[RMDB]
RNA sequence: GGGAACGACUCGAGUAGAGUCGAAAACGGUCGUCUACGUCUCCACCAUUGAUGGCGACCACCACUGGUACGGGCUCCGCAAAGACCUCCUGGACCACUUCAUCGCAUACGCGGAAGCCGCCUGAUGGCCGAUAGCUGCUGCGCCCUCUGCCGUACAGCAUUUAGUAGGGUUCGCCCUACUAAAUGCAAAAGAAACAACAACAACAAC
Reactivity to 2A3 in 0.01 (KOAc 150mM, MgCl2 10mM, bicine 150mM(pH8.5), 24C), signal-to-noise 2, nucleotides 027 to 156: c090g010g020u020c000g000u020c040u110a040c100g060u030c020u080c080c040a130c020c070a180u060u280g060a100u100g030g000c020g000a000c000c010a010c000c020a030c060u090g000g050u090a030c040g060g010g050c030u000c050c020g000c040a120a080a050g010a050c010c020u090c050c050u060g020g030a070c020c030a040c010u110u070c050a110u030c010g030c100a130u130a250c110g000c000g000g000a040a030g010c000c010g040c020c010u080g030a120u120g040g030c010c010g110a050u130a050g010c040u050g000c000u020g010c000g010c010c010c000u010c020u030g050c010c000g020u050a030c050a050
Structure probing data (2A3) for a 207-nucleotide construct. Values cover nucleotides 27 to 156. The reactions ran in a buffer of 150 mM KOAc, 10 mM MgCl2 and 150 mM bicine (pH 8.5), at 24 C. For 2A3 the reverse transcriptase was SuperScript II with manganese.